Structure probing data (2A3 and DMS) for a 177-nucleotide construct. The reactions ran in a buffer of 150 mM KOAc, 10 mM MgCl2 and 150 mM bicine (pH 8.5), at 24 C. In probing experiments dimethyl sulfate is read out at A N1 and C N3, which are open when not base-paired.

[RMDB]
RNA sequence: GGGAACGACUCGAGUAGAGUCGAAAAGCCAGUGGUGCUGUCGUGAUGCGGUCUUCGCAUGGACCGCACAAUGAAGAUACGGUGCUUUUGUAUCGUACUUAUUGUUUCUGGUGCGCUGUUAACCGAGCGAGUAACUUAGGUUCGCCUAAGUUACUCGAAAAGAAACAACAACAACAAC
Reactivity to 2A3 in 0.01 (KOAc 150mM, MgCl2 10mM, bicine 150mM(pH8.5), 24C), signal-to-noise 6, nucleotides 027 to 126: g090c020c000a040g020u060g080g000u070g030c030u030g020u070c030g050u090g050a110u040g020c000g020g000u050c020u120u150c100g030c110a080u180g030g010a000c010c000g020c000a000c000a000a040u110g040a010a010g040a050u010a010c000g000g010u020g010c020u080u150u150u300g040u020a010u020c010g000u000a010c000u030u050a040u020u040g050u020u080u060c020u070g020g000u050g010c040g000c040u050g030u120u120a040a040c030c020g020a040g060
Reactivity to DMS in 0.01 (KOAc 150mM, MgCl2 10mM, bicine 150mM(pH8.5), 24C), signal-to-noise 4, nucleotides 027 to 126: g010c020c010a090g010u030g010g010u000g010c030u000g000u000c050g020u020g000a150u010g020c000g010g000u010c040u010u020c130g020c120a070u020g000g020a020c010c010g000c000a010c020a030a050u020g000a030a020g010a160u000a010c000g000g010u000g010c010u010u030u020u030g010u010a000u000c020g010u010a000c010u000u000a060u000u000g010u000u010u000c040u010g010g010u010g000c050g000c050u010g000u000u010a090a110c120c070g010a060g020